Structure probing data (DMS and 2A3) for a 177-nucleotide construct. The DMS profile rests on 26,291 reads. The reactions ran in a buffer of 150 mM KOAc, 10 mM MgCl2 and 150 mM bicine (pH 8.5), at 24 C. High 2A3 reactivity points to a flexible backbone, as in loops and unpaired stretches.
RNA sequence: GGGAACGACUCGAGUAGAGUCGAAAAGAUAUGGACCGCCCUUGUCAGAACUGUGUCGGAAACGACAUCUAAGUUCUUGGAUUUAGGGACGGUCCUAAGUCAAAAGUGUUACGUUCGCGUAACACAACCACUAAUUAUUGUUCGCAAUAAUUAGUGGAAAAGAAACAACAACAACAAC
Reactivity to DMS in 0.01 (KOAc 150mM, MgCl2 10mM, bicine 150mM(pH8.5), 24C), signal-to-noise 9, nucleotides 027 to 126: g000a060u010a300u000g010g000a010c000c000g010c000c000c000u000u000g000u000c020a050g000a010a010c000u000g020u000g020u000c000g000g000a130a110a280c010g010a010c000a010u010c200u020a130a040g010u000u000c000u000u020g030g010a040u000u010u000a030g010g000g010a100c000g020g010u000c000c000u000a000a120g010u010c040a100a110a140a160g020u000g010u000u000a000c000g020u000u010c260g030c010g020u000a010a010c000a010c010a100a140
Reactivity to 2A3 in 0.01 (KOAc 150mM, MgCl2 10mM, bicine 150mM(pH8.5), 24C), signal-to-noise 9, nucleotides 027 to 126: g030a010u080a040u150g000g000a000c010c000g010c010c000c000u010u020g030u030c030a020g000a010a010c010u010g000u010g010u020c000g030g030a090a080a050c010g010a000c000a020u040c060u190a120a030g010u000u010c000u030u160g240g020a060u300u210u250a020g000g000g080a060c000g000g000u000c000c000u000a010a000g030u010c030a020a020a080a160g000u000g010u000u010a020c030g010u020u110c300g000c000g120u010a010a000c000a000c000a010a030
About this RNA
Source: RMDB library TTRDES, as collected in RNAgym.